[RMDB]
RNA sequence: GGGAACGACUCGAGUAGAGUCGAAAAGGGUUUUGGUUCGCCAAAACCCAAAAUAAAAAGUACGAAAGGCAACGUACGCCAAUAAGAUCGAAAGAUCAAAAAAAACUCAUUCCUUCGGGAAUGAGAACAAUGGAUUGUAGUUCGCUACAAUCCAUUGAAAAGAAACAACAACAACAAC
Reactivity to 2A3 in 0.01 (KOAc 150mM, MgCl2 10mM, bicine 150mM(pH8.5), 24C), signal-to-noise 3, nucleotides 027 to 126: g020g010g000u020u000u010u000g040g000u030u050c150g090c020c000a010a000a010a010c000c010c000a000a010a000a000u040a000a030a000a000a000g020u010a010c010g140a270a030a050g250g020c060a090a010c040g010u020a000c010g000c010c010a050a110u170a220a030g000a000u000c020g010a080a010a010g000a000u000c000a080a020a000a010a000a000a010a000c000u000c000a000u010u010c000c000u010u050c200g060g000g000a000a000u010g000a010g000a010a000
Reactivity to DMS in 0.01 (KOAc 150mM, MgCl2 10mM, bicine 150mM(pH8.5), 24C), signal-to-noise 3, nucleotides 027 to 126: g010g030g000u000u000u000u000g010g010u010u010c190g000c000c010a000a000a030a000c000c000c000a010a010a030a050u000a050a060a050a070a100g000u010a010c020g010a060a120a140g010g000c200a080a050c010g000u010a010c000g000c040c070a090a110u010a080a100g000a010u000c000g000a110a090a140g000a010u000c010a000a000a000a020a080a090a080a140c000u010c000a000u000u000c000c000u010u000c210g010g010g000a010a000u000g000a010g010a060a080